[RMDB]
RNA sequence: GGGAACGACUCGAGUAGAGUCGAAAACGUGGGCUUGUGAUCCAAGUGGAGGCAUUAAGGUGGUGGAAAGUUGUUCUUGUCCAGACGGCUGAGUCUAGCCUGAUUAAUAUCAGGCCUGCCCGUUCCAAGCCAAGAGCUGAGCCAUGUGACCCUAGCGCUACUCUUAGUGCUUCGGCACUAAGAGUAGAAAAGAAACAACAACAACAAC
Reactivity to 2A3 in 0.01 (KOAc 150mM, MgCl2 10mM, bicine 150mM(pH8.5), 24C), signal-to-noise 1, nucleotides 027 to 156: c010g010u030g000g040g010c040u060u050g000u100g080a040u130c060c020a100a040g010u060g010g090a090g000g020c020a020u090u070a110a070g030g030u090g020g020u010g010g030a100a050a050g040u090u070g010u040u030c000u040u070g000u000c010c010a010g010a070c000g000g030c000u030g020a060g130u070c050u060a010g010c010c000u000g010a010u010u130a150a060u110a050u200c000a000g000g000c000c030u030g010c000c000c000g010u130u030c050c020a030a010g020c000c050a070a030g030a020g030c030u050g000a030g000c000c010a040u050g010u020g080a030c000c000c000u000a010g040c040g000
Reactivity to DMS in 0.01 (KOAc 150mM, MgCl2 10mM, bicine 150mM(pH8.5), 24C), signal-to-noise 2, nucleotides 027 to 156: c020g060u000g010g030g020c060u000u040g020u000g030a070u010c040c040a080a120g030u000g030g000a130g010g060c060a120u010u010a070a080g030g010u010g000g060u010g000g000a120a090a090g000u000u000g030u020u010c050u000u000g020u000c010c050a200g010a050c040g040g010c080u000g010a130g010u010c040u010a050g000c010c000u000g000a010u000u000a040a130u010a220u010c000a040g040g010c020c000u000g020c000c010c010g040u000u010c040c020a060a090g000c020c010a050a140g000a080g000c020u000g010a010g020c000c000a070u020g000u000g000a100c010c020c030u000a060g020c140g000

An RNA of 207 nucleotides, treated with 2A3 and DMS and read out base by base. 2A3 adducts were read by reverse transcription with SuperScript II with manganese. Reactivities are given for positions 27 through 156. As a SHAPE reagent, 2A3 marks flexible, mostly unpaired nucleotides at the ribose 2'-OH. The data come from the RNA Mapping Database (RMDB), library ARCHII.